[RMDB]
RNA sequence: GGGAACGACUCGAGUAGAGUCGAAAAAGAUACGAUUAAGCCUUGUCUAGCGGCUUGAUAAGAGAUUGAUAGACUCGCAGUUUCUAGACUUGAGUUAUGUGUCGAGGGGCUGUUAAAAUAAUACAUAACCUAUGGUUGUAGACAAAUAUGUUGGCAGGACGUGAAUUAACUUCGGUUAAUUCACGUCAAAAGAAACAACAACAACAAC
Reactivity to 2A3 in 0.01 (KOAc 150mM, MgCl2 10mM, bicine 150mM(pH8.5), 24C), signal-to-noise 2, nucleotides 027 to 156: a000g030a000u050a000c020g030a020u020u010a010a010g010c000c010u100u220g010u020c000u000a000g030c000g030g000c000u020u040g000a000u020a080a000g040a000g020a070u140u300g050a010u050a020g010a020c000u000c000g000c000a000g000u020u000u030c020u010a000g000a010c000u010u000g040a030g120u000u010a000u020g010u000g000u000c000g010a000g000g020g020g000c000u000g000u030u010a000a010a040a020u180a020a040u060a070c020a010u020a000a020c000c000u050a080u220g130g000u030u010g020u050a050g010a140c040a020a140a040u200a050u140g030u040u030g020g040c050a060g110
This 207-nucleotide RNA was probed chemically with 2A3. 2A3 adducts were read by reverse transcription with SuperScript II with manganese.